[RMDB]
RNA sequence: GGGAACGACUCGAGUAGAGUCGAAAAAGAAUGCGAAGUGCCUGCCGGUAGUCUGGCGAUGGUCGGCGAUUCUCUACCUGCAUUCGGUAUUGUUGCCGCCGUUAUGGGGGUGGUGCAUGCCCUGGCACACAGUCCUUAGGUUCGCCUAAGGACUGUGAAAAGAAACAACAACAACAAC
Reactivity to 2A3 in 0.01 (KOAc 150mM, MgCl2 10mM, bicine 150mM(pH8.5), 24C), signal-to-noise 3, nucleotides 027 to 126: a000g060a000a000u040g010c020g060a150a030g050u020g100c030c000u010g010c020c030g040g040u150a100g080u090c090u090g070g030c040g040a090u110g000g050u130c010g010g000c010g010a050u180u020c020u050c020u070a030c020c000u060g060c020a100u030u100c010g020g010u090a090u080u130g130u070u160g000c010c000g010c020c010g080u160u150a140u230g150g000g050g020g000u040g020g010u040g000c010a020u070g000c000c000c010u030g050g000c050a020
Reactivity to DMS in 0.01 (KOAc 150mM, MgCl2 10mM, bicine 150mM(pH8.5), 24C), signal-to-noise 3, nucleotides 027 to 126: a080g010a030a030u010g010c020g010a110a100g020u000g020c060c020u010g010c030c020g000g010u010a120g010u010c030u010g010g010c080g000a060u000g000g030u010c050g020g010c020g000a090u010u000c050u000c060u000a050c050c020u010g010c040a050u000u000c080g000g010u000a040u000u020g000u010u010g040c030c010g010c010c010g020u000u000a100u000g010g010g000g020g020u000g010g030u000g000c040a060u010g000c030c010c050u000g000g010c060a230